[RMDB]
RNA sequence: GGGAACGACUCGAGUAGAGUCGAAAAAACUCUGGUCUUGGUGGUCGUAAAAGGAGGAAAAGUAAUGCUGAAGCUGGCCUCACGGCGCUUGUAGUCUGCUAUAGAGCAUGUGGGCUAGUUUCACACAUUAUCUAAAAUGUUUCGACAUUUUAGAUAAAAAAGAAACAACAACAACAAC
Reactivity to DMS in 0.01 (KOAc 150mM, MgCl2 10mM, bicine 150mM(pH8.5), 24C), signal-to-noise 9, nucleotides 027 to 126: a070a040c040u010c020u010g000g010u000c020u010u000g010g020u010g000g010u000c020g010u010a050a050a080a080g000g000a070g000g000a060a050a060a080g010u020a070a070u020g010c290u010g010a020a010g010c000u000g000g010c010c000u040c020a020c020g010g010c070g010c030u000u010g030u000a020g010u030c180u040g010c020u000a020u000a040g010a030g010c010a080u020g020u000g000g000g000c000u000a010g010u000u000u000c000a020c090a070c190a100
Reactivity to 2A3 in 0.01 (KOAc 150mM, MgCl2 10mM, bicine 150mM(pH8.5), 24C), signal-to-noise 8, nucleotides 027 to 126: a000a000c050u050c030u060g030g030u030c020u030u060g060g010u070g030g010u030c020g020u050a050a080a040a020g090g040a020g020g060a030a070a040a030g120u170a110a070u130g060c120u020g010a010a000g000c000u000g010g010c010c010u210c030a010c010g090g000c100g010c030u020u020g020u010a020g040u050c150u130g080c000u060a040u050a090g040a020g040c020a050u140g010u010g000g000g000c000u000a000g000u000u000u010c000a000c000a000c000a040
This 177-nucleotide RNA was probed chemically with DMS and 2A3. Reactivities are given for positions 27 through 126. Source: RMDB libraries RFM100 and RFMREP, as collected in RNAgym. DMS adducts were read by reverse transcription with MarathonRT. For 2A3 the reverse transcriptase was SuperScript II with manganese.